[RMDB]
RNA sequence: GGGAACGACUCGAGUAGAGUCGAAAAGAGAAGGACGGCUACGUCGGUGUCGCCAUUUCCACGGCGAACACGCCACUGUACGCCGAAAUCGUCCAGCAGCCCUCCGGUGGCGGGCUCGACAUCCUCCGCGCGCUCUCGUCAUUGCAGGCGUGGCUCGACAUAAACUAGCAUUCGUGCUAGUUUAUGUAAAAGAAACAACAACAACAAC
Reactivity to 2A3 in 0.01 (KOAc 150mM, MgCl2 10mM, bicine 150mM(pH8.5), 24C), signal-to-noise 4, nucleotides 027 to 156: g100a000g080a130a030g050g030a000c010g010g000c000u010a000c020g040u040c080g010g020u020g020u010c000g010c020c010a030u140u120u040c090c080a060c100g000g010c010g030a090a050c070a030c030g080c020c010a040c080u190g000u040a000c130g000c010c030g040a030a020a010u050c010g020u000c010c000a020g030c030a010g000c020c020c000u090c050c070g130g010u100g060g000c000g010g060g020c020u040c020g040a040c010a060u040c000c010u050c020c030g040c000g000c000g000c010u020c000u020c040g130u030c070a130u050u200g020c090a030g040g000c020g030u030g030g010c030u030c060g020
Reactivity to DMS in 0.01 (KOAc 150mM, MgCl2 10mM, bicine 150mM(pH8.5), 24C), signal-to-noise 2, nucleotides 027 to 156: g010a120g020a100a100g000g020a030c000g020g010c030u000a050c040g010u000c030g020g000u000g050u010c050g000c010c020a160u000u010u000c090c150a150c120g000g030c060g000a050a160c170a060c040g010c070c030a050c040u000g010u000a010c040g010c020c000g010a020a080a100u000c030g000u000c020c040a150g030c060a100g030c020c000c020u000c030c050g010g020u000g000g020c190g020g020g030c050u000c030g010a080c030a070u000c030c010u000c030c050g010c010g010c040g010c030u010c030u010c060g030u000c020a120u010u000g020c050a060g010g070c050g000u000g020g020c020u000c060g000